[RMDB]
RNA sequence: GGGAACGACUCGAGUAGAGUCGAAAAAUGAUGGUCAUGAAAGGCUACAUCCUAAACCAGCUACACUCGCUUAUACUUUAAGCGUGUGCCCUGAGGAGAAAUUCACUGCUAUUACUAAGGAUGGUGACGAACAAUCGUUCUUCGGAACGAUUGUUCGAAAAGAAACAACAACAACAAC
Reactivity to DMS in 0.01 (KOAc 150mM, MgCl2 10mM, bicine 150mM(pH8.5), 24C), signal-to-noise 2, nucleotides 027 to 126: a060u010g000a100u000g000g000u010c040a090u020g030a100a110a180g000g010c070u000a110c080a070u000c000c000u000a110a100a130c070c050a030g020c040u020a190c000a000c000u000c000g000c030u000u000a020u000a180c240u020u000u000a000a000g000c000g030u000g000u000g020c080c300c070u000g000a070g010g000a130g000a080a070a140u000u000c060a030c010u000g010c040u020a060u000u010a050c130u010a080a070g000g000a100u000g000g000u000g010a070
Reactivity to 2A3 in 0.01 (KOAc 150mM, MgCl2 10mM, bicine 150mM(pH8.5), 24C), signal-to-noise 2, nucleotides 027 to 126: a010u140g070a040u010g000g070u010c060a020u210g140a180a050a000g020g000c000u030a030c020a020u010c010c000u020a040a040a070c020c010a000g000c010u050a040c010a000c010u040c000g110c020u050u000a050u100a190c050u220u200u060a020a000g000c000g000u020g000u010g000c030c020c010u050g050a070g110g010a050g050a030a050a020u160u060c040a050c060u090g000c010u060a050u190u180a180c110u060a070a000g080g010a060u110g020g100u090g020a030
Chemical mapping of a 177-nucleotide RNA with DMS and 2A3. For 2A3, 1,205 sequencing reads were counted. The reactions ran in a buffer of 150 mM KOAc, 10 mM MgCl2 and 150 mM bicine (pH 8.5), at 24 C.